[RMDB]
RNA sequence: GGGAACGACUCGAGUAGAGUCGAAAAUGAGUGAUCUGUCCUUUUAUAGAUUUCUCGGUUUUAGGAGCAUCAGUAUUAACCGCUUCAUCUCCUUCAAUCUCAACUUCGGUCAAAGGACGUGGAGACCCAUACAUCACUCGUUCGCGAGUGAUGUAUGAAAAGAAACAACAACAACAAC
Reactivity to DMS in 0.01 (KOAc 150mM, MgCl2 10mM, bicine 150mM(pH8.5), 24C), signal-to-noise 5, nucleotides 027 to 126: u020g000a100g010u000g010a070u010c010u000g010u000c090c060u000u010u000u010a100u000a100g000a030u000u010u000c080u000c110g010g000u000u000u010u000a070g010g010a040g020c210a040u000c110a040g020u010a090u010u000a100a100c210c130g000c040u000u010c150a070u010c020u000c020c000u010u000c090a050a040u000c020u010c150a060a070c090u000u000c050g000g020u000c130a020a040a060g000g010a020c050g000u000g000g010a110g000a100c070c040
Reactivity to 2A3 in 0.01 (KOAc 150mM, MgCl2 10mM, bicine 150mM(pH8.5), 24C), signal-to-noise 3, nucleotides 027 to 126: u140g010a020g050u060g020a060u030c020u060g010u060c020c000u030u060u030u110a210u070a060g040a030u020u070u010c070u030c000g020g030u010u030u010u090a030g020g010a010g010c030a030u050c040a030g040u030a050u150u120a100a110c060c040g030c020u040u030c030a040u010c030u010c010c000u010u030c020a040a080u000c030u000c050a010a120c040u090u050c030g060g000u040c020a070a040a050g050g000a010c030g020u070g030g010a050g010a030c000c000

About this RNA: This 177-nucleotide RNA was probed chemically with DMS and 2A3. It was measured as part of the RMDB library OK2TST. The reactions ran in a buffer of 150 mM KOAc, 10 mM MgCl2 and 150 mM bicine (pH 8.5), at 24 C. For 2A3, 4,338 sequencing reads were counted. The DMS profile rests on 4,572 reads.